RNA sequence: GGGAACGACUCGAGUAGAGUCGAAAAUCCUUUCUCGAUAGUGAUUGGAGUCAUACAACCCCAGAAACCAUUCCUUAUACCUUGAGUAUUGCUGAAUUCAGUUUAGCGUGCAUGCUCUUGGCUAUUCAUACCAAGGACAACUUCGGUUGUCCUUGAACGAAACUUAGACGUUCGCGUCUAAGUUUCGAAAAGAAACAACAACAACAAC
Reactivity to DMS in 0.01 (KOAc 150mM, MgCl2 10mM, bicine 150mM(pH8.5), 24C), signal-to-noise 1, nucleotides 027 to 156: u000c020c040u000u000u000c040u000c020g000a180u000a070g020u000g020a100u000u010g010g000a080g020u000c010a170u000a140c070a100a070c000c020c000c050a170g010a170a120a030c040c040a180u010u000c030c010u020u000a150u000a120c030c010u000u030g000a070g060u000a040u010u010g040c050u000g020a150a020u000u000c150a150g000u000u000u000a030g010c070g000u010g060c150a230u010g020c010u000c010u000u020g010g070c040u010a100u000u000c060a140u010a190c090c010a010a000g000g000a040c000a000a040c010u000u020c220g090g030u000u000g000u050c000c010u000u000g020a060a120
Reactivity to 2A3 in 0.01 (KOAc 150mM, MgCl2 10mM, bicine 150mM(pH8.5), 24C), signal-to-noise 3, nucleotides 027 to 156: u020c000c000u000u000u020c080u040c020g130a180u090a100g060u040g010a030u010u000g010g030a040g070u060c050a040u030a140c070a080a080c010c060c020c020a000g110a050a070a060c070c000a070u070u120c010c000u100u120a070u030a130c000c000u000u030g010a010g000u020a030u090u190g060c020u030g100a160a110u110u140c040a080g230u010u110u170a060g010c020g020u050g030c020a020u010g010c000u000c000u020u000g010g020c000u090a060u060u160c040a040u100a250c040c030a000a000g000g000a010c000a000a000c000u020u070c120g100g010u000u000g020u050c010c000u000u000g000a000a000